[RMDB]
RNA sequence: GGGAACGACUCGAGUAGAGUCGAAAAUUAUCUCCAAGUAAUCCAGAAGCAGCUGAUGCUACUGGUCUACAAUACUGAGCUAAUAUUGAGAUUGCAGAUGCAAACACCACAGUAGCUCCAAAUGCUUGCUCAUGACCGUCUUCGGACGGUCAUGAGCAAAAGAAACAACAACAACAAC
Reactivity to 2A3 in 0.01 (KOAc 150mM, MgCl2 10mM, bicine 150mM(pH8.5), 24C), signal-to-noise 1, nucleotides 027 to 126: u000u000a060u300c000u000c020c000a020a020g030u070a050a050u070c070c040a010g000a080a000g080c000a000g000c070u160g100a210u000g000c010u000a040c000u000g030g000u000c000u040a040c000a100a170u070a270c150u210g000a000g000c210u100a000a000u000a220u300u000g030a000g080a090u000u000g060c030a040g020a160u090g000c000a000a000a300c080a000c250c010a000c000a010g000u010a000g000c000u010c030c000a160a180a000u030g080c040u060u000
Background
An RNA of 177 nucleotides, treated with 2A3 and read out base by base. The reactions ran in a buffer of 150 mM KOAc, 10 mM MgCl2 and 150 mM bicine (pH 8.5), at 24 C.